Record summary
Structure probing data (2A3 and DMS) for a 207-nucleotide construct. Conditions: 150 mM KOAc, 10 mM MgCl2 and 150 mM bicine (pH 8.5), 24 C. DMS (dimethyl sulfate) methylates the pairing face of unpaired adenines and cytosines. For DMS, 5,581 sequencing reads were counted. For 2A3 the reverse transcriptase was SuperScript II with manganese.
RNA sequence: GGGAACGACUCGAGUAGAGUCGAAAAUACGGUAAGGGUCUCACUCUAAGUGGGCUACACUAGUUAAUCUCCGUCUGGGGUUAAAUAGAAGAGCUUAAUCAGACUAGCUGAAUGGAAGCCUGUUACUGGGCCGAUGUUUAUGCGAAAUGCUAAUACGCCUUUAGAUGUAGUUCGCUACAUCUAAAGGAAAAGAAACAACAACAACAAC
Reactivity to 2A3 in 0.01 (KOAc 150mM, MgCl2 10mM, bicine 150mM(pH8.5), 24C), signal-to-noise 6, nucleotides 027 to 156: u150a020c050g010g030u070a060a050g140g020g060u030c040u040c030a040c000u100c050u070a170a100g010u030g000g000g030c020u070a030c020a010c040u000a000g010u000u020a030a030u030c040u020c060c050g090u030c080u140g000g000g000g020u020u030a030a040a040u070a060g090a160a010g040a030g020c030u080u150a030a020u120c010a000g030a060c020u020a020g010c010u010g020a020a010u020g020g020a030a000g010c010c000u050g070u210u110a130c180u150g010g010g010c000c010g010a010u050g020u010u030u020a110u180g000c000g020a050a050a070u080g000c010u020a090a070u080a100c080g040
Reactivity to DMS in 0.01 (KOAc 150mM, MgCl2 10mM, bicine 150mM(pH8.5), 24C), signal-to-noise 3, nucleotides 027 to 156: u000a050c050g010g030u000a080a100g030g000g000u000c020u000c020a040c030u000c080u010a070a100g060u000g000g010g010c020u000a070c020a070c010u010a030g010u010u000a010a040u000c010u000c030c130g020u000c040u010g040g000g010g030u000u010a000a020a060u000a100g030a110a120g020a120g020c030u000u000a090a090u000c020a080g000a050c040u000a190g020c020u000g020a010a030u000g010g010a130a050g020c020c010u010g020u010u000a140c240u010g040g020g050c000c020g000a300u010g010u000u000u000a040u000g030c020g000a130a060a150u010g020c050u010a070a120u000a070c130g000